The record gives the reactivity of an RNA of 207 nucleotides to 2A3. The RNA was probed in 150 mM KOAc, 10 mM MgCl2 and 150 mM bicine (pH 8.5) at 24 C. For 2A3 the reverse transcriptase was SuperScript II with manganese.

[RMDB]
RNA sequence: GGGAACGACUCGAGUAGAGUCGAAAAUGCCGGACGAACCAAACCUAUCGGAAGACCCCUUCGCGUGGAUGCCCGGCGAUUUCGUCGACACGAUUGACGGCACGCCAACGAUUAACCGGCGUGGGUAUGCAGCACUCGGUCGUAAAUUCGGGAUUAGGCAGGACAAUGUAUUCGUACAUUGUCCUGCAAAAGAAACAACAACAACAAC
Reactivity to 2A3 in 0.01 (KOAc 150mM, MgCl2 10mM, bicine 150mM(pH8.5), 24C), signal-to-noise 2, nucleotides 027 to 156: u000g000c000c000g030g020a030c040g080a080a200c070c070a100a080a080c010c060u160a100u210c040g010g060a000a090g160a230c000c040c020c000u010u020c070g030c040g060u050g060g050a030u040g060c000c000c030g000g010c070g010a000u040u050u110c080g010u010c000g000a000c010a020c160g160a090u020u160g070a070c030g010g040c000a000c030g020c030c020a140a040c070g180a220u290u140a070a130c030c060g020g020c010g000u000g000g000g000u070a080u280g020c040a020g040c000a000c000u050c050g000g000u000c000g010u030a030a030a030u090u130c000g000g000g040a000u150u180a050g010